This 177-nucleotide RNA was probed chemically with DMS and 2A3. 2A3 adducts were read by reverse transcription with SuperScript II with manganese. The RNA was probed in 150 mM KOAc, 10 mM MgCl2 and 150 mM bicine (pH 8.5) at 24 C.
RNA sequence: GGGAACGACUCGAGUAGAGUCGAAAAUCCGCGUCACGGAGCGCCGUGACCGGGGGUAACCCUGGCCGGGCACAGGCCCGUCUGGGUUAGCCCGCCUGAUCAUGCCGUUGGCUUAGAUGAAGGCGGGAUAACAGACAUGUUUCGACAUGUCUGUUAUAAAAGAAACAACAACAACAAC
Reactivity to DMS in 0.01 (KOAc 150mM, MgCl2 10mM, bicine 150mM(pH8.5), 24C), signal-to-noise 9, nucleotides 027 to 126: u020c000c000g020c200g010u000c000a000c000g000g000a300g020c300g020c020c000g020u000g000a010c000c020g000g000g000g010g010u000a020a020c020c000c000u020g010g010c060c030g010g010g010c010a230c280a140g020g000c000c000c010g000u000c010u000g000g000g000u000u000a040g010c000c000c000g010c000c000u000g010a060u000c010a070u000g010c000c010g030u030u030g020g010c010u000u020a110g000a020u000g010a160a040g000g010c000g010g000g000
Reactivity to 2A3 in 0.01 (KOAc 150mM, MgCl2 10mM, bicine 150mM(pH8.5), 24C), signal-to-noise 9, nucleotides 027 to 126: u000c000c000g020c120g010u000c000a010c010g030g040a250g200c300g100c100c000g000u000g000a000c000c000g000g000g000g010g030u020a010a010c000c000c000u010g040g000c100c050g020g000g010c070a170c090a270g300g030c000c000c000g000u000c000u020g000g000g000u000u020a010g010c000c000c000g000c000c000u010g010a010u000c000a020u050g010c010c060g300u140u300g020g000c020u040u090a070g000a050u060g050a050a010g000g000c000g000g000g000